[RMDB]
Chemical mapping of a 177-nucleotide RNA with 2A3 and DMS. DMS adducts were read by reverse transcription with MarathonRT. For 2A3, 2,994 sequencing reads were counted. High DMS reactivity at an A or C suggests that its Watson-Crick edge is free.
RNA sequence: GGGAACGACUCGAGUAGAGUCGAAAAGAAAGAAGCCACAUGACGAUUUGCUUUUUGUAAAGAGAGUGGGCAGCGGGCAACCGUUGGCCCACGAAUGACCAGUUACUAAUCUUCUCGCUGAUGGUAAACGCACACAAUUUUUCGAAAUUGUGUGCGUAAAAGAAACAACAACAACAAC
Reactivity to 2A3 in 0.01 (KOAc 150mM, MgCl2 10mM, bicine 150mM(pH8.5), 24C), signal-to-noise 3, nucleotides 027 to 126: g220a000a080a010g040a030a000g010c010c010a020c010a050u080g100a100c050g020a010u020u010u110g060c080u090u010u010u050u120g050u050a040a060a010g140a020g020a000g030u000g000g000g000c010a000g000c000g010g040g000c050a060a100c020c000g030u020u050g100g000c000c000c000a000c000g000a000a000u040g070a000c000c050a040g040u040u010a040c000u020a010a060u000c000u070u000c020u000c020g020c020u050g030a190u030g040g020u040a040a130
Reactivity to DMS in 0.01 (KOAc 150mM, MgCl2 10mM, bicine 150mM(pH8.5), 24C), signal-to-noise 3, nucleotides 027 to 126: g020a070a080a070g000a170a090g000c050c050a070c080a120u000g010a060c130g000a080u000u010u000g000c060u000u000u000u020u010g000u020a030a060a080g000a120g000a250g050u000g010g000g040c010a040g000c000g000g000g030c300a080a130c000c000g020u000u010g010g000c000c000c000a000c000g000a040a030u030g000a100c100c090a060g010u010u000a030c030u000a010a060u000c020u000u000c030u000c040g000c020u000g020a080u020g020g030u010a030a090
Source: RMDB libraries RFM100 and RFMREP, as collected in RNAgym.
Conditions: 150 mM KOAc, 10 mM MgCl2 and 150 mM bicine (pH 8.5), 24 C.